An RNA of 177 nucleotides, treated with DMS and 2A3 and read out base by base. Conditions: 150 mM KOAc, 10 mM MgCl2 and 150 mM bicine (pH 8.5), 24 C. The DMS profile rests on 2,005 reads. For 2A3 the reverse transcriptase was SuperScript II with manganese.

[RMDB]
RNA sequence: GGGAACGACUCGAGUAGAGUCGAAAAGUGGUGCCACGGUGUCGUGGAAGGCACGCGUAGGCCGAGUGUGAGUGGGUGCGCAAGUGGGUGCGCGAAUGCGCGGGGCGUGCGAGGUGAGUGUGUGCGCGGUAAGAAUGAGGUUCGCCUCAUUCUUACCAAAAGAAACAACAACAACAAC
Reactivity to DMS in 0.01 (KOAc 150mM, MgCl2 10mM, bicine 150mM(pH8.5), 24C), signal-to-noise 1, nucleotides 027 to 126: g000u000g040g020u000g000c020c000a060c020g000g020u000g010u000c020g020u010g010g020a160a100g000g020c010a000c030g060c030g010u000a060g040g010c010c050g010a160g010u010g000u010g010a100g020u010g000g000g010u010g000c060g030c040a040a100g010u000g000g010g000u020g020c000g010c040g000a070a090u000g020c030g000c030g000g000g000g010c080g030u000g000c030g010a080g030g020u000g000a110g030u000g010u010g010u010g010c050g040c140
Reactivity to 2A3 in 0.01 (KOAc 150mM, MgCl2 10mM, bicine 150mM(pH8.5), 24C), signal-to-noise 1, nucleotides 027 to 126: g080u080g040g080u200g020c000c030a020c030g050g000u060g030u070c060g000u070g180g130a220a090g030g000c010a010c010g230c000g050u060a110g050g000c000c000g030a010g050u110g010u030g040a080g000u060g050g000g000u070g030c030g000c040a080a060g020u020g040g000g060u100g030c000g000c020g020a210a120u210g020c000g000c000g020g000g000g040c090g010u020g030c020g040a060g070g020u100g030a080g020u050g020u020g050u060g040c070g020c020